[RMDB]
RNA sequence: GGGAACGACUCGAGUAGAGUCGAAAAUACUUAGUACGCGCGUAGUUGCAGGCAUUCCGGGUGCAGCAACUGACGCGGAAGACUUUUCCCACAGUGUGCGCUUCAACUGGCGUGCUGAGUAGUGCACGAAUUGCACGUACGUUCGCGUACGUGCAAAUAUCACCCUUCUUUUCGAAGAAGGGUGAUAAAAAGAAACAACAACAACAAC
Reactivity to 2A3 in 0.01 (KOAc 150mM, MgCl2 10mM, bicine 150mM(pH8.5), 24C), signal-to-noise 3, nucleotides 027 to 156: u060a000c000u020u010a000g000u010a020c010g010c000g010c020g030u010a000g000u000u000g000c070a090g090g000c020a020u080u160c140c160g210g060g020u000g030c000a000g010c000a000a010c010u100g180a030c000g020c030g000g020a000a010g130a050c020u140u050u050u000c010c050c010a010c000a000g090u070g000u010g060c000g000c010u070u090c070a110a100c070u120g080g000c020g010u020g000c000u000g000a010g000u060a000g010u010g010c010a010c030g000a120a110u020u010g000c010a000c000g000u000a000c010g000u010u040c180g000c000g110u000a010c000g000u000g000c000a000a000a000
Reactivity to DMS in 0.01 (KOAc 150mM, MgCl2 10mM, bicine 150mM(pH8.5), 24C), signal-to-noise 2, nucleotides 027 to 156: u000a040c040u000u000a050g030u000a170c000g000c000g040c030g020u010a040g020u000u000g010c020a180g000g000c010a040u000u020c040c300g010g050g120u000g000c020a300g020c010a010a020c010u000g000a020c000g040c000g000g000a100a190g010a140c160u000u030u000u000c020c010c000a080c030a050g000u000g000u010g030c040g000c020u000u000c060a110a110c070u000g010g010c050g030u000g040c010u000g030a110g040u000a060g030u010g000c010a090c010g010a090a180u010u000g000c000a020c040g000u000a010c000g040u010u010c300g040c030g060u000a000c050g010u000g000c000a000a010a090
This 207-nucleotide RNA was probed chemically with 2A3 and DMS. For 2A3 the reverse transcriptase was SuperScript II with manganese. The data come from the RNA Mapping Database (RMDB), library M2RFOK. The RNA was probed in 150 mM KOAc, 10 mM MgCl2 and 150 mM bicine (pH 8.5) at 24 C.